[RMDB]
RNA sequence: GGGAACGACUCGAGUAGAGUCGAAAAAGUGAGUAUGGCUCGUUACGACGAGCCAUACUCACAACGGUUUUCCUAAAUCGUCGUGAGACGGACCUUGGAAAACCUAAUAUUUAAAUAACUAGGUCAAAUUAGCCUAGAUCCUUCGGGAUCUAGGCAAGUCAUAGUAAGAGUUCGCUCUUACUAUGACAAAAGAAACAACAACAACAAC
Reactivity to 2A3 in 0.01 (KOAc 150mM, MgCl2 10mM, bicine 150mM(pH8.5), 24C), signal-to-noise 4, nucleotides 027 to 156: a000g000u010g000a000g000u000a000u000g010g000c000u010c030g020u040u070a110c300g010a010c010g000a110g020c010c000a000u000a000c000u000c000a000c000a000a000c000g000g000u000u000u010u000c000c000u000a000a000a000u060c000g000u000c010g000u020g130a140g000a020c000g000g000a000c000c000u010u020g000g000a000a000a000a000c000c000u010a060a020u030a010u090u070u060a080a130a080u100a050a020c030u020a010g000g000u010c010a010a030a150u190u180a050g000c000c000u000a000g000a000u000c000c000u010u050c130g080g000g000a000u000c000u000a000g000g000c000a000a000
Reactivity to DMS in 0.01 (KOAc 150mM, MgCl2 10mM, bicine 150mM(pH8.5), 24C), signal-to-noise 1, nucleotides 027 to 156: a120g040u010g010a000g040u000a010u000g010g000c000u000c010g000u010u010a140c300g040a140c000g010a020g000c000c000a000u000a010c000u000c000a000c020a000a020c100g000g000u000u000u000u000c000c030u020a010a010a010u010c000g000u010c020g010u020g000a300g040a050c020g010g000a020c000c030u010u010g020g000a010a040a040a010c020c000u010a000a040u020a060u000u000u010a140a120a100u000a070a180c070u010a020g020g010u010c050a040a120a150u010u010a110g010c000c010u000a010g010a000u000c010c040u010u000c300g040g010g010a010u000c000u010a000g000g000c000a000a010